[RMDB]
RNA sequence: GGGAACGACUCGAGUAGAGUCGAAAAUGGGCGAGUUGGAAGUUUCGGAUGGAGCUGCUGCUAGUGAAAGAUGAAUUGUAUGAGGUGGUGAUGCUGCAAAAGCCAGCUGAAGUUCCUGCUGAUUGGAUGGUCAGCUAAAUUUCGAUUUAGCUGACCAAAAAGAAACAACAACAACAAC
Reactivity to DMS in 0.01 (KOAc 150mM, MgCl2 10mM, bicine 150mM(pH8.5), 24C), signal-to-noise 2, nucleotides 027 to 126: u010g000g000g010c070g010a070g020u010u000g030g010a110a050g010u000u000u000c050g020g030a100u010g010g000a080g010c070u010g020c050u000g010c030u000a100g020u010g000a110a080a100g010a050u010g000a080a060u000u010g020u000a050u000g000a150g000g040u000g000g000u000g000a070u010g020c020u000g010c090a040a110a110a150g010c070c020a010g020c030u000g000a050a090g010u000u000c020c010u000g000c100u000g000a120u010u010g010g010a150